The record gives the reactivity of an RNA of 177 nucleotides to DMS and 2A3. For DMS the reverse transcriptase was MarathonRT. High 2A3 reactivity points to a flexible backbone, as in loops and unpaired stretches. For 2A3 the reverse transcriptase was SuperScript II with manganese.
[RMDB]
RNA sequence: GGGAACGACUCGAGUAGAGUCGAAAAGCAGGUUGUCGAUCUCGGUCUCAGCCCGGGCGACAAGCCGUUGGUGAUCGUUGUCCGCAGGAGUGUUGAGUGAGGCGGCCAGCGCCGUGUAGUAGUCACGUCCGUACCCUUUAUUCGUAAAGGGUACGGAAAAAGAAACAACAACAACAAC
Reactivity to DMS in 0.01 (KOAc 150mM, MgCl2 10mM, bicine 150mM(pH8.5), 24C), signal-to-noise 4, nucleotides 027 to 126: g010c050a200g020g010u000u000g010u000c000g010a210u000c010u000c020g020g000u000c050u000c070a100g010c190c100c020g000g000g000c000g000a020c030a040a150g020c010c000g030u000u010g020g020u000g010a110u010c120g000u000u010g010u000c020c010g040c050a110g020g000a210g010u010g000u000u010g010a060g010u010g010a260g010g010c020g010g010c040c030a040g020c050g010c130c030g020u010g010u000a060g010u000a130g010u010c030a030c090g000
Reactivity to 2A3 in 0.01 (KOAc 150mM, MgCl2 10mM, bicine 150mM(pH8.5), 24C), signal-to-noise 2, nucleotides 027 to 126: g030c030a020g000g020u030u000g020u010c000g000a120u010c010u010c000g060g020u050c030u000c040a050g030c050c020c000g030g000g010c020g000a010c010a000a040g030c010c010g170u050u170g040g010u040g000a140u140c050g010u010u010g010u000c000c030g000c030a020g190g100a040g000u160g060u170u080g030a030g010u030g010a040g000g020c050g020g000c010c000a030g000c030g010c040c010g020u030g000u050a100g020u010a010g040u040c000a000c030g040